[RMDB]
This 177-nucleotide RNA was probed chemically with 2A3 and DMS.
For 2A3 the reverse transcriptase was SuperScript II with manganese.
RNA sequence: GGGAACGACUCGAGUAGAGUCGAAAAAAGCAUGACCUCUGCCGAGGUAGUCUGUGGGGUAGAGCGACGGAUUGGGGGACCGCACUCCGAGAGGAGUGCGCCCCCCUGUCCAACUCCGAACCUACAGGCCAUAUCGAAGGUUCGCCUUCGAUAUGGCAAAAGAAACAACAACAACAAC
Reactivity to 2A3 in 0.01 (KOAc 150mM, MgCl2 10mM, bicine 150mM(pH8.5), 24C), signal-to-noise 1, nucleotides 027 to 126: a000a000g200c110a140u230g070a040c030c000u010c010u090g100c030c090g010a030g010g020u050a050g090u030c010u000g010u000g000g070g000g000u120a030g010a000g000c050g060a070c130g040g010a040u000u050g000g000g000g000g000a010c000c010g000c000a000c000u010c000c000g030a020g000a000g040g040a010g020u000g020c000g000c000c000c000c000c000c000u000g000u000c000c000a000a010c000u000c010c040g030a160a090c000c000u010a000c000a010g000
Reactivity to DMS in 0.01 (KOAc 150mM, MgCl2 10mM, bicine 150mM(pH8.5), 24C), signal-to-noise 1, nucleotides 027 to 126: a060a110g070c050a050u060g020a010c050c010u000c000u000g040c090c040g060a000g000g010u000a000g000u050c010u000g000u000g000g000g000g010u040a060g000a040g000c090g000a110c300g000g010a010u000u020g000g000g030g060g000a050c300c000g000c000a000c000u000c000c010g010a290g020a050g050g000a020g000u000g000c000g030c000c000c000c000c070c000u000g020u000c000c000a120a300c010u000c090c040g000a070a290c000c000u000a000c000a000g010